[RMDB]
RNA sequence: GGGAACGACUCGAGUAGAGUCGAAAAAUUAAGCAAAACCAACAACGAAAAAAAUGGCAAUACAUUCUAAAACAUUCCCUCAACAUUGCAGAACUCAUGAAAGGAACCAUGGUUACUGCCACCAGGCCAGCUAGUACUCCUUCGGGAGUACUAGCUGAAAAGAAACAACAACAACAAC
Reactivity to 2A3 in 0.01 (KOAc 150mM, MgCl2 10mM, bicine 150mM(pH8.5), 24C), signal-to-noise 2, nucleotides 027 to 126: a000u160u090a030a000g080c040a140a000a010a000c030c000a000a040c030a030a060c040g300a200a130a000a000a000a000a000u100g000g000c000a000a000u070a090c020a120u080u190c010u140a100a220a000a000c020a020u000u000c010c030c000u060c050a050a150c020a120u100u180g050c040a040g000a020a020c040u050c190a040u030g110a130a140a150g060g000a050a000c040c000a000u040g010g020u000u040a120c020u000g000c000c000a010c010c020a000g000g060c000
Reactivity to DMS in 0.01 (KOAc 150mM, MgCl2 10mM, bicine 150mM(pH8.5), 24C), signal-to-noise 1, nucleotides 027 to 126: a130u000u000a080a140g000c120a000a030a030a020c020c030a060a050c110a100a260c090g000a000a020a110a070a130a020a040u000g000g000c080a040a030u040a230c080a000u040u060c100u000a030a060a080a010c150a170u000u000c000c010c000u000c140a000a060c030a050u000u060g000c030a030g030a060a090c000u020c030a020u000g020a000a110a160g000g000a170a060c170c000a000u000g000g000u000u000a080c080u000g010c000c060a190c150c020a050g000g000c040

Structure probing data (2A3 and DMS) for a 177-nucleotide construct.
For DMS the reverse transcriptase was MarathonRT.
The reactions ran in a buffer of 150 mM KOAc, 10 mM MgCl2 and 150 mM bicine (pH 8.5), at 24 C.